Source: RMDB library TTRINS, as collected in RNAgym. An RNA of 177 nucleotides, treated with DMS and read out base by base. Reactivities are given for positions 27 through 126. DMS adducts were read by reverse transcription with MarathonRT. Conditions: 150 mM KOAc, 10 mM MgCl2 and 150 mM bicine (pH 8.5), 24 C.
RNA sequence: GGGAACGACUCGAGUAGAGUCGAAAAGAUAUGGACGGAGACAUGGGGAUAUCCUGUGAGGAGUUGUUAGUCGGAAACGACUAACACUCUCCUACACAGGAUAUCCCCAACAGCUCCGUCCUAAGUCCAAUAGGUUGUAGUUCGCUACAACCUAUUGAAAAGAAACAACAACAACAAC
Reactivity to DMS in 0.01 (KOAc 150mM, MgCl2 10mM, bicine 150mM(pH8.5), 24C), signal-to-noise 6, nucleotides 027 to 126: g000a110u010a300u000g010g000a020c010g000g000a020g010a040c110a060u000g000g000g000g000a020u000a000u000c000c000u000g010u000g000a100g010g010a020g010u000u000g010u000u000a010g010u000c000g000g000a160a140a270c010g000a010c000u000a000a000c010a010c180u000c000u000c010c000u000a160c000a010c000a020g000g000a000u000a000u000c000c010c010c000a000a000c100a170g000c010u000c000c000g010u000c000c000u000a010a070g000u000c050